[RMDB]
RNA sequence: GGGAACGACUCGAGUAGAGUCGAAAAACGUGAGGUCGAGGCCCAGAUGACCGACGACGAGCGAUUCUCACUGUUGGUCGGCCUGACCGGGGCCAGCGAUCUGUGGCCGGUGCGCGAUGAACGCAUCGCUUGUGGGCGCAUUCGUGCGCCCACAAGCAAAAGAAACAACAACAACAAC
Reactivity to DMS in 0.01 (KOAc 150mM, MgCl2 10mM, bicine 150mM(pH8.5), 24C), signal-to-noise 1, nucleotides 027 to 126: a210c110g000u010g000a020g000g030u000c000g000a260g010g000c010c000c120a300g000a030u050g010a000c000c020g000a000c050g000a150c190g000a070g000c300g060a200u000u040c070u000c020a120c280u000g000u000u080g000g000u000c000g000g040c030c000u000g010a040c300c100g000g070g000g130c000c000a070g000c030g000a000u000c000u010g000u130g000g020c000c000g000g040u000g000c000g000c000g020a070u000g000a160a120c000g000c000a000u000c020
Reactivity to 2A3 in 0.01 (KOAc 150mM, MgCl2 10mM, bicine 150mM(pH8.5), 24C), signal-to-noise 2, nucleotides 027 to 126: a000c060g080u070g150a010g000g000u010c020g040a000g040g000c000c000c010a020g000a110u290g020a000c000c000g000a000c020g040a000c010g110a030g050c150g160a150u300u070c000u000c000a020c060u180g100u080u040g140g040u000c000g000g070c010c000u080g090a160c020c000g020g000g000g000c050c020a090g120c030g000a020u000c000u010g010u030g070g000c000c080g000g000u010g000c000g000c030g050a060u260g020a090a020c010g050c010a020u000c010